This 177-nucleotide RNA was probed chemically with 2A3 and DMS. The reactions ran in a buffer of 150 mM KOAc, 10 mM MgCl2 and 150 mM bicine (pH 8.5), at 24 C. Values cover nucleotides 27 to 126. It was measured as part of the RMDB library M2PK50.
RNA sequence: GGGAACGACUCGAGUAGAGUCGAAAACUCUGACGCUUCGGCGUCAGAGAAACCUCAAAGCAGAUUGGCGAGGACGACGCUGCGGAGCGCGUUUGCCAACAAAAACGCAUAGAUUCGUCUAUGCGAACCGGUAAACCAGGUUCGCCUGGUUUACCGGAAAAGAAACAACAACAACAAC
Reactivity to 2A3 in 0.01 (KOAc 150mM, MgCl2 10mM, bicine 150mM(pH8.5), 24C), signal-to-noise 2, nucleotides 027 to 126: c000u010c000u000g010a010c030g000c010u040u030c150g180g050c000g020u020c000a000g000a000g010a000a000a000c000c000u040c080a080a090a050g100c070a090g110a300u030u030g000g000c020g040a080g120g050a030c010g030a040c010g010c030u160g100c090g130g190a020g010c020g000c000g010u000u000u060g030c000c000a020a040c020a040a140a010a020a000c000g000c000a000u000a000g000a000u040u070c170g040u000c090u010a000u030g000c000g030a030a030
Reactivity to DMS in 0.01 (KOAc 150mM, MgCl2 10mM, bicine 150mM(pH8.5), 24C), signal-to-noise 1, nucleotides 027 to 126: c000u000c000u010g010a000c020g020c000u000u010c210g030g010c000g010u000c010a000g000a000g010a040a080a080c010c030u030c140a040a040a080g020c100a070g020a090u000u000g010g000c050g000a070g020g020a080c020g020a090c000g080c020u010g020c300g000g000a010g080c020g000c000g000u000u020u000g030c000c010a030a030c050a010a030a050a140a160c010g000c010a010u000a000g000a000u000u010c150g020u000c010u000a010u000g030c010g000a010a020